[RMDB]
RNA sequence: GGGAACGACUCGAGUAGAGUCGAAAAGUUGCAAACCUGCUGUCCGGCACACUGAGCGCGGUGACAUUGUCCAACAAGCGGUCCUGCGCUUCCGGCGGGAGGUAGCGGAGCAACCCUUCAGCGCUCCCGUACUUUAGCAGUUCGCUGCUAAAGUACGAAAAGAAACAACAACAACAAC
Reactivity to 2A3 in 0.01 (KOAc 150mM, MgCl2 10mM, bicine 150mM(pH8.5), 24C), signal-to-noise 2, nucleotides 027 to 126: g060u070u060g030c020a070a110a140c010c010u080g100c000u020g300u120c010c000g030g000c110a030c010a050c230u180g040a020g000c000g000c020g000g050u160g020a010c030a090u080u200g040u120c090c020a120a060c030a100a150g080c100g110g000u000c000c000u010g000c000g000c000u050u010c000c010g010g010c010g020g000g010a000g010g000u020a000g020c030g000g000a020g010c010a010a120c000c010c000u110u180c060a050g040c020g010c060u010c000c020
Reactivity to DMS in 0.01 (KOAc 150mM, MgCl2 10mM, bicine 150mM(pH8.5), 24C), signal-to-noise 4, nucleotides 027 to 126: g010u010u000g010c060a080a130a110c070c010u010g010c010u000g000u000c010c020g010g000c300a040c160a100c240u010g000a000g000c000g030c010g000g010u010g010a030c040a070u000u000g010u000c050c060a060a060c300a090a130g010c040g010g000u010c010c010u000g000c010g020c010u000u000c030c080g010g000c050g000g010g010a090g000g000u000a030g010c070g000g010a160g010c030a040a080c030c030c050u000u000c070a090g010c050g010c020u000c010c040
The record gives the reactivity of an RNA of 177 nucleotides to 2A3 and DMS. 2A3 is a SHAPE reagent: it acylates the 2'-hydroxyl of flexible nucleotides of all four kinds. Reactivities are given for positions 27 through 126. DMS adducts were read by reverse transcription with MarathonRT. The reactions ran in a buffer of 150 mM KOAc, 10 mM MgCl2 and 150 mM bicine (pH 8.5), at 24 C. The DMS profile rests on 3,155 reads.